[RMDB]
RNA sequence: GGGAACGACUCGAGUAGAGUCGAAAAGAUAUGGAAGUGGCGUACAACAGCUAAGGGUUCGGAAACGAACCUUAGACAUGUACAGCCACUUCCUAAGUCAAAAGAAGGCUCGUUCGCGAGCCUUCAACUUCCCUUGAGAGUUCGCUCUCAAGGGAAGAAAAGAAACAACAACAACAAC
Reactivity to DMS in 0.01 (KOAc 150mM, MgCl2 10mM, bicine 150mM(pH8.5), 24C), signal-to-noise 1, nucleotides 027 to 126: g000a000u000a250u010g000g000a020a040g050u010g000g000c000g060u000a010c000a110a080c300a170g010c000u000a010a010g000g030g000u010u000c000g010g010a050a040a100c000g010a010a030c010c000u000u000a000g020a070c130a170u000g000u000a010c010a170g030c020c000a000c000u010u000c000c000u020a000a110g010u020c010a100a060a140a190g000a010a000g010g020c000u010c060g030u000u020c230g010c000g010a000g010c000c000u010u010c000a040a100